[RMDB]
RNA sequence: GGGAACGACUCGAGUAGAGUCGAAAAUGACGAAGCUGCUCAGCUCAGUGUGCAAGGAACGUAACGAAGAGCGUUUUGAGUGCUACCUUGAAGGUACGACAAGCUGAAUCAAGAUAGCGUCUGUAGAGUCCUUCGUGGAUUUCGAUCCACGAGGGACAAAAGAAACAACAACAACAAC
Reactivity to DMS in 0.01 (KOAc 150mM, MgCl2 10mM, bicine 150mM(pH8.5), 24C), signal-to-noise 9, nucleotides 027 to 126: u020g010a040c030g000a100a080g010c020u000g010c140u000c010a050g000c010u000c080a100g010u020g020u010g000c030a050a230g000g000a020a030c040g020u000a080a020c150g010a140a130g010a110g000c020g000u000u000u010u010g000a270g000u000g000c020u000a030c020c010u010u040g010a090a080g000g010u010a070c150g010a090c170a120a050g000c010u000g000a070a070u010c040a050a030g000a080u040a050g000c010g000u000c010u010g010u010a060g010a280
Reactivity to 2A3 in 0.01 (KOAc 150mM, MgCl2 10mM, bicine 150mM(pH8.5), 24C), signal-to-noise 9, nucleotides 027 to 126: u130g000a010c010g020a050a020g020c030u030g000c000u010c010a010g000c000u010c030a040g040u030g000u020g060c000a010a010g040g000a030a000c010g020u080a040a000c040g050a070a040g030a010g030c000g000u000u000u010u020g020a010g010u040g000c010u000a010c000c000u010u070g080a090a020g030g000u050a040c050g030a020c030a030a020g000c000u010g020a020a040u070c050a050a010g010a030u060a020g020c000g010u000c020u020g080u050a040g020a010
Annotation: Structure probing data (DMS and 2A3) for a 177-nucleotide construct. The RNA was probed in 150 mM KOAc, 10 mM MgCl2 and 150 mM bicine (pH 8.5) at 24 C. The data come from the RNA Mapping Database (RMDB), library OK1LIB. 2A3 adducts were read by reverse transcription with SuperScript II with manganese.